Structure probing data (DMS and 2A3) for a 177-nucleotide construct. Reactivities are given for positions 27 through 126. For DMS, 3,467 sequencing reads were counted. The RNA was probed in 150 mM KOAc, 10 mM MgCl2 and 150 mM bicine (pH 8.5) at 24 C. It was measured as part of the RMDB library OK2TST. 2A3 adducts were read by reverse transcription with SuperScript II with manganese. For DMS the reverse transcriptase was MarathonRT.

RNA sequence: GGGAACGACUCGAGUAGAGUCGAAAAGUCAAGAUAUAAAUGGAAAGGAAAUGAAAUUCGAAGUAUUAACAUUAUCAAGCUUGACAUCAGAAAUACAAGUCAAUAUUGAGAUAGAAUCUAGAAAAUCCUUGAAUCAUUAAUUCGUUAAUGAUUCAAGAAAAGAAACAACAACAACAAC
Reactivity to DMS in 0.01 (KOAc 150mM, MgCl2 10mM, bicine 150mM(pH8.5), 24C), signal-to-noise 4, nucleotides 027 to 126: g020u010c020a040a080g020a060u010a150u000a060a110a060u000g000g000a100a060a150g020g000a040a040a070u010g010a070a140a190u000u000c020g010a110a140g010u000a040u000u000a080a150c020a030u000u010a070u000c080a040a100g010c050u000u000g010a030c020a080u000c160a080g020a080a080a070u010a050c170a060a090g020u000c070a030a030u010a050u000u010g010a100g010a080u010a090g000a050a210u000c020u010a160g000a090a050a050a100u000c090
Reactivity to 2A3 in 0.01 (KOAc 150mM, MgCl2 10mM, bicine 150mM(pH8.5), 24C), signal-to-noise 4, nucleotides 027 to 126: g020u020c000a000a000g030a020u060a020u030a180a100a030u080g000g020a100a080a050g060g030a050a080a080u130g030a110a140a050u110u050c040g040a070a010g070u090a070u150u090a020a010c010a020u020u030a090u170c020a030a040g050c010u010u000g000a000c010a020u050c030a020g180a060a090a000u180a080c060a060a070g030u020c000a060a010u070a060u150u050g010a040g000a010u030a040g090a070a030u030c030u050a020g090a080a080a050a020u090c010